This 207-nucleotide RNA was probed chemically with 2A3 and DMS. The RNA was probed in 150 mM KOAc, 10 mM MgCl2 and 150 mM bicine (pH 8.5) at 24 C. For DMS the reverse transcriptase was MarathonRT.

[RMDB]
RNA sequence: GGGAACGACUCGAGUAGAGUCGAAAACGAUCUGUUCGCAGAUCGAGCUACGGAGACGUAGCGAAGCGAUCCGGUCCUCGGUGGAUCGCGCUACUUGAGAUAUAACCAGAUCCGCCACUCCUGGGAUCUGGCCGAGGACAUAGAGAAAGGAGUGGGAAAAUACUAUAGGCUUCGGCCUAUAGUAUUUAAAAGAAACAACAACAACAAC
Reactivity to 2A3 in 0.01 (KOAc 150mM, MgCl2 10mM, bicine 150mM(pH8.5), 24C), signal-to-noise 4, nucleotides 027 to 156: c000g000a010u000c000u020g070u110u080c230g010c090a000g000a000u010c010g010a030g000c010u010a000c010g040g020a080g020a070c020g000u000a000g010c010g000a110a010g010c000g000a000u010c000c000g010g060u030c000c000u010c000g000g020u040g050g000a000u010c000g010c010g020c040u140a100c050u070u160g090a040g050a130u180a060u030a220a090c030c020a010g000a030u020c010c020g040c050c010a010c010u020c010c020u040g060g010g030a020u000c020u000g010g000c000c000g000a000g010g010a000c000a020u110a000g150a000g030a020a080a020g000g000a000g000u020g000g010g010a080
Reactivity to DMS in 0.01 (KOAc 150mM, MgCl2 10mM, bicine 150mM(pH8.5), 24C), signal-to-noise 2, nucleotides 027 to 156: c000g000a030u000c010u020g010u010u020c290g040c040a050g020a010u010c010g000a060g020c000u000a000c000g030g000a300g000a300c010g040u000a010g010c000g010a020a080g010c000g020a060u000c020c000g010g020u010c000c000u000c040g000g020u020g030g020a040u010c020g020c010g000c050u000a010c050u000u000g000a080g030a160u020a090u020a090a100c020c000a100g000a040u000c010c020g040c000c020a020c000u010c020c020u000g020g030g010a040u000c010u010g050g020c000c030g000a060g010g020a050c080a140u010a060g020a210g020a150a110a050g050g010a060g040u020g000g010g000a060